[RMDB]
RNA sequence: GGGAACGACUCGAGUAGAGUCGAAAACUUUUUGUGAUGAUACCUUUGAUAGGGACAUCUGAUGUCUAUGAUUGAUUUAUCAUGAUAGUAGAACUGAUUGAAAUCGGCCAGAGUUCGCUCUGGCCGACUUUCAAAGUGUGUUCGCACACUUUGAAAGAAAAGAAACAACAACAACAAC
Reactivity to 2A3 in 0.01 (KOAc 150mM, MgCl2 10mM, bicine 150mM(pH8.5), 24C), signal-to-noise 3, nucleotides 027 to 126: c010u120u100u020u060u130g080u030g020a020u000g020a020u100a230c010c000u060u010u110g090a070u120a050g050g000g070a030c020a030u060c170u100g110a140u090g040u000c040u040a040u060g070a010u080u030g030a040u040u100u110a030u010c000a000u030g050a010u050a060g090u040a020g070a150a080c060u060g030a140u130u110g080a080a080a090u030c000g000g010c000c000a010g020a000g020u020u080c140g050c080u000c000u010g040g020c000c000g000a000
Reactivity to DMS in 0.01 (KOAc 150mM, MgCl2 10mM, bicine 150mM(pH8.5), 24C), signal-to-noise 4, nucleotides 027 to 126: c020u000u010u010u000u010g030u010g000a020u000g000a040u000a150c060c000u000u000u000g010a080u000a040g010g010g010a080c020a110u010c130u020g020a080u000g000u010c010u000a020u010g000a050u000u000g010a050u000u000u010a020u010c000a020u010g000a050u000a040g010u000a080g010a110a180c070u000g010a150u000u010g010a050a080a140u000c000g000g010c000c000a010g010a020g010u000u010c290g020c010u000c010u000g000g000c010c000g000a000

Background: Structure probing data (2A3 and DMS) for a 177-nucleotide construct. The reactions ran in a buffer of 150 mM KOAc, 10 mM MgCl2 and 150 mM bicine (pH 8.5), at 24 C. It was measured as part of the RMDB library RFMREP. For DMS the reverse transcriptase was MarathonRT. Reactivities are given for positions 27 through 126.